Overview:
Chemical mapping of a 177-nucleotide RNA with 2A3. Source: RMDB library RFM100, as collected in RNAgym. Conditions: 150 mM KOAc, 10 mM MgCl2 and 150 mM bicine (pH 8.5), 24 C. Reactivities are given for positions 27 through 126. Reactivities are rounded to 0.1 and cut off at 0 and 3. 2A3 adducts were read by reverse transcription with SuperScript II with manganese.
RNA sequence: GGGAACGACUCGAGUAGAGUCGAAAAAGAGGAUUACGAUCCUCAGCGGCUCUGGCACCCACGUAUUCGAUCUUGCGAGAGAUAAAGGACAUCUCAAGCUCGGGUUUAUGGGUGUUGGACCAAGCAAUUGAUCCAGCACCUUCGGGUGCUGGAUCAAAAAAGAAACAACAACAACAAC
Reactivity to 2A3 in 0.01 (KOAc 150mM, MgCl2 10mM, bicine 150mM(pH8.5), 24C), signal-to-noise 1, nucleotides 027 to 126: a000g000a000g000g000a000u000u000a060c190g010a000u000c000c000u000c000a000g040c130g000g000c230u030c000u030g030g020c050a000c040c050c060a040c000g100u120a040u000u000c030g070a090u090c040u040u110g010c110g030a020g010a030g000a020u300a220a300a040g230g050a060c000a110u040c000u090c000a000a000g000c000u000c000g010g010g020u000u010u050a040u050g000g000g090u010g000u000u000g000g000a000c000c000a000a000g000c000a000a140